[RMDB]
RNA sequence: GGGAACGACUCGAGUAGAGUCGAAAACAGGACACUGUGUGGGAAACCUCACUGCGUGCCAUCAAUGACCUAGGGUUCUUCGCUAAGAACGCCUACAUGGGUGCUCAGAACAUUACGGAGAUUGCUGGGAUGAUUGUCACUGGUAACGUUCGUGCUCACUCCUCCGAUAAUUCGUUAUCGGAGGAGUAAAAGAAACAACAACAACAAC
Reactivity to 2A3 in 0.01 (KOAc 150mM, MgCl2 10mM, bicine 150mM(pH8.5), 24C), signal-to-noise 3, nucleotides 027 to 156: c050a030g030g080a000c030a010c080u040g020u010g030u060g070g000g000a040a140a080c010c010u030c020a010c020u020g000c010g000u010g000c020c000a010u070c050a040a100u110g120a100c010c020u020a040g050g000g000u030u010c010u040u020c040g000c130u150a080a030g010a060a030c050g130c030c000u110a130c090a130u200g040g000g020u010g000c000u000c070a060g040a090a020c020a060u110u130a020c050g040g020a020g010a090u050u120g060c010u050g020g050g040a110u090g060a050u010u100g030u050c000a030c090u020g020g020u040a100a000c020g010u040u060c050g010u040g040c030u060c020
Reactivity to DMS in 0.01 (KOAc 150mM, MgCl2 10mM, bicine 150mM(pH8.5), 24C), signal-to-noise 1, nucleotides 027 to 156: c050a180g030g020a070c000a080c020u000g020u020g040u000g000g000g050a190a070a160c050c020u030c010a050c010u000g030c070g020u000g020c000c040a130u000c070a060a100u010g030a060c050c030u000a070g030g010g000u010u000c000u000u030c220g070c060u000a130a110g010a030a030c010g000c050c000u000a050c230a090u010g010g000g040u000g050c030u020c030a130g010a190a180c090a120u000u000a070c020g030g020a090g000a080u000u000g040c020u010g000g010g000a110u000g010a120u020u010g010u010c010a080c140u010g030g020u000a040a110c080g000u000u000c100g000u000g040c060u010c040
Chemical mapping of a 207-nucleotide RNA with 2A3 and DMS.
High 2A3 reactivity points to a flexible backbone, as in loops and unpaired stretches.
Values cover nucleotides 27 to 156.
The 2A3 profile rests on 1,853 reads.
It was measured as part of the RMDB library OK3TST.
For 2A3 the reverse transcriptase was SuperScript II with manganese.